[RMDB]
RNA sequence: GGGAACGACUCGAGUAGAGUCGAAAACAACUGAAAUGAUGCCCUCACUACUAAUGGUUUCCCCUGUUCUGUCACCAAUAUUGGAAAAUCAGUUGGUGUCUAUUUGUAGGACAAGGCUAUGUGAAGGCCAGCAGGUUAGAUUCGUCUAACCUGCUGGAAAAGAAACAACAACAACAAC
Reactivity to DMS in 0.01 (KOAc 150mM, MgCl2 10mM, bicine 150mM(pH8.5), 24C), signal-to-noise 2, nucleotides 027 to 126: c050a130a100c110u000g040a130a080a130u010g000a130u000g000c040c000c030u000c050a040c010u010a070c080u000a070a020u010g010g000u000u000u000c040c020c050c070u000g020u000u020c040u000g000u000c050a020c020c000a030a000u000a140u040u000g010g010a110a100a100a130u000c080a070g010u000u000g010g000u000g000u010c050u010a150u010u010u010g010u010a030g010g010a030c060a070a020g030g010c090u000a060u010g000u010g020a070a080g000g030
Reactivity to 2A3 in 0.01 (KOAc 150mM, MgCl2 10mM, bicine 150mM(pH8.5), 24C), signal-to-noise 2, nucleotides 027 to 126: c040a070a000c090u300g050a100a060a200u260g070a080u140g060c020c020c000u040c010a070c010u080a010c020u040a050a170u150g120g000u010u100u070c020c020c000c020u020g030u070u000c010u020g070u020c020a000c010c010a030a030u050a200u130u100g050g020a210a020a020a120u160c020a020g030u050u000g020g000u000g010u000c010u010a060u090u170u080g130u060a030g000g030a000c000a040a050g010g030c020u060a030u170g060u020g000a000a000g050g040